[RMDB]
The record gives the reactivity of an RNA of 177 nucleotides to 2A3 and DMS.
RNA sequence: GGGAACGACUCGAGUAGAGUCGAAAAGAAGGAUAGUUCGCUAUCCUUCAAACCCACCGAAAGGCAAAUGUGUUAGAUGCCCUCUAACACAUAAACGGGGCAAAACAGUACCGUUCGCGGUACUGAACGAUACAGCAGUCUUCGGACUGCUGUAUCGAAAAGAAACAACAACAACAAC
Reactivity to 2A3 in 0.01 (KOAc 150mM, MgCl2 10mM, bicine 150mM(pH8.5), 24C), signal-to-noise 1, nucleotides 027 to 126: g010a010a010g020g000a000u000a020g000u020u020c050g010c100u000a000u030c010c000u020u010c000a000a000a020c020c000c000a000c000c020g030a160a040a020g140g030c090a110a140a030u010g000u000g030u010u000a010g000a050u300g040c010c020c010u000c000u000a010a010c010a010c010a000u030a000a010a010c030g000g010g090g040c060a050a070a030a010c010a000g000u000a020c000c020g000u020u040c250g020c010g030g000u000a000c000u000g000a020a010
Reactivity to DMS in 0.01 (KOAc 150mM, MgCl2 10mM, bicine 150mM(pH8.5), 24C), signal-to-noise 2, nucleotides 027 to 126: g000a030a000g010g000a000u000a000g010u000u000c290g050c010u000a010u020c010c000u000u000c000a010a080a060c010c010c000a170c080c070g000a050a090a080g010g000c160a050a070a030u000g010u000g000u000u000a000g000a020u020g010c180c170c100u010c000u000a000a000c000a010c010a000u010a010a080a120c140g000g020g020g020c230a040a040a100a130c000a020g010u000a010c000c000g010u010u010c270g000c010g000g040u010a010c010u000g000a030a060
DMS adducts were read by reverse transcription with MarathonRT. Source: RMDB library M2PK50, as collected in RNAgym. The reactions ran in a buffer of 150 mM KOAc, 10 mM MgCl2 and 150 mM bicine (pH 8.5), at 24 C. The DMS profile rests on 1,102 reads.